[RMDB]
RNA sequence: GGGAACGACUCGAGUAGAGUCGAAAAGAAAGAGAUGGGGCACUCAGGCUAUAAGGUAGAGAAAUUGAUGCUGUCUACACUAUUCAGACUUCAGUUUCAUUACCUUUCAAUUUGUUUGCCCCCAUAAUUACUUAGAGGGUUUCGACCCUCUAAGUAAAAAAGAAACAACAACAACAAC
Reactivity to DMS in 0.01 (KOAc 150mM, MgCl2 10mM, bicine 150mM(pH8.5), 24C), signal-to-noise 5, nucleotides 027 to 126: g000a060a080a080g000a060g020a100u020g020g000g010g020c000a010c010u000c010a050g000g000c040u010a100u030a020a020g000g000u000a010g000a030g000a000a000a010u000u000g000a020u000g000c040u000g010u000c040u000a160c230a160c300u050a030u010u010c020a000g010a150c010u000u000c000a010g020u000u000u000c000a090u010u000a000c000c000u000u000u000c280a070a100u010u010u000g000u000u010u010g010c030c000c000c020c050a000u010a080a160
Reactivity to 2A3 in 0.01 (KOAc 150mM, MgCl2 10mM, bicine 150mM(pH8.5), 24C), signal-to-noise 5, nucleotides 027 to 126: g080a010a040a010g130a010g010a050u190g010g000g010g000c000a000c000u000c000a000g030g010c000u040a040u030a270a000g000g000u000a010g030a010g010a080a000a000u010u000g010a000u010g000c020u010g020u010c050u090a090c110a070c180u170a090u080u050c010a060g170a280c000u010u000c000a000g000u000u000u000c020a040u030u030a000c010c000u000u010u010c020a010a020u000u000u020g000u010u000u010g000c000c010c000c000c000a010u020a040a030